The record gives the reactivity of an RNA of 177 nucleotides to 2A3. For 2A3 the reverse transcriptase was SuperScript II with manganese.

[RMDB]
RNA sequence: GGGAACGACUCGAGUAGAGUCGAAAAACGGCCCACUCCGAUAGAUCAUUUAUCCUCAUGUCGCGGCCGAGGUCGGCGGCCAAGGUAUCGACAACACUAUUGACCUUGUGCGCGAGCGCUCUAUCGACGUGCAGUGGGCAUUCGUGCCCACUGCACGAAAAGAAACAACAACAACAAC
Reactivity to 2A3 in 0.01 (KOAc 150mM, MgCl2 10mM, bicine 150mM(pH8.5), 24C), signal-to-noise 1, nucleotides 027 to 126: a000c000g120g000c020c000c000a040c020u000c000c000g020a000u050a070g020a030u070c040a110u040u120u150a160u130c020c030u110c040a140u240g020u110c020g050c040g110g040c000c000g000a000g020g040u060c010g020g040c020g000g000c060c010a050a020g060g010u000a070u070c040g110a060c010a220a030c030a030c050u100a120u210u150g020a030c000c000u040u000g040u050g000c040g000c000g060a070g090c020g000c020u050c000u010a030u040c000g040a040